RNA sequence: GGGAACGACUCGAGUAGAGUCGAAAAAAGCAGGCAAACAGUACGCUUUGAAAAGCGGGUGAAACUCCAAUGUGUUGUGCAAUCUGCUGGUCACUCUCCAUGCCGAGCGCCUUUAAUACUACUACGACCUAACGGGUCUGUUCGCAGACCCGUUAGGAAAAGAAACAACAACAACAAC
Reactivity to DMS in 0.01 (KOAc 150mM, MgCl2 10mM, bicine 150mM(pH8.5), 24C), signal-to-noise 1, nucleotides 027 to 126: a020a140g090c100a060g000g090c060a140a060a080c090a090g060u050a070c000g010c060u000u000u030g060a020a130a140a050g010c070g000g020g000u040g000a000a080a150c050u030c010c010a200a020u030g000u050g000u030u000g060u010g020c070a030a030u000c000u000g040c040u000g000g000u040c030a110c060u030c030u000c090c000a100u010g000c020c000g070a060g000c100g000c020c000u000u060u000a000a080u070a120c010u000a100c000u000a020c080g000a130
Reactivity to 2A3 in 0.01 (KOAc 150mM, MgCl2 10mM, bicine 150mM(pH8.5), 24C), signal-to-noise 2, nucleotides 027 to 126: a000a000g000c030a020g100g000c030a020a020a090c010a050g110u190a020c030g010c050u050u110u300g060a230a120a020a020g010c000g000g000g000u100g000a080a000a000c040u000c030c040a060a110u190g030u000g000u010u010g060u070g070c000a000a010u050c030u010g000c000u040g000g000u000c000a050c050u070c000u000c000c020a090u120g040c000c000g000a010g010c010g010c020c020u140u150u020a090a120u040a090c130u000a000c050u010a000c050g100a030